[RMDB]
RNA sequence: GGGAACGACUCGAGUAGAGUCGAAAAGGAGCUCGAUGCUAUGUGGUAACUACACUCUAAGUUAUCACUACUUAGAGAGCCCUGAGUAAAGUUAUGAGAGGGUGAUCGUAACUUAUAGCAUCGAGAAGAUAGGAGUGAUAUUCGUGUCAUUUCUAUCAAAAGAAACAACAACAACAAC
Reactivity to 2A3 in 0.01 (KOAc 150mM, MgCl2 10mM, bicine 150mM(pH8.5), 24C), signal-to-noise 9, nucleotides 027 to 126: g170g020a060g030c000u000c000g000a000u000g000c000u000a000u010g010u010g000g000u000a000a000c000u030a010c070a040c040u040c010u030a020a010g000u000u000a020u020c010a000c010u000a000c000u010u020a010g030a000g010a020g160c030c000c000u000g000a000g000u010a010a030a010g010u020u030a020u050g020a040g030a040g100g200g060u150g090a080u030c010g000u010a000a000c000u010u010a000u000a000g000c000a000u000c000g000a000g000a000a010
Reactivity to DMS in 0.01 (KOAc 150mM, MgCl2 10mM, bicine 150mM(pH8.5), 24C), signal-to-noise 8, nucleotides 027 to 126: g010g000a120g010c000u000c000g000a010u000g000c010u000a000u000g010u000g000g000u000a010a010c010u000a120c130a210c030u010c030u010a080a050g000u000u000a020u000c040a030c050u000a000c010u000u000a020g000a120g010a090g010c070c040c000u000g000a060g010u000a020a030a030g010u000u000a010u000g000a070g020a140g010g010g010u020g000a140u000c020g010u000a000a000c010u000u000a010u000a000g010c000a000u000c000g000a000g010a040a060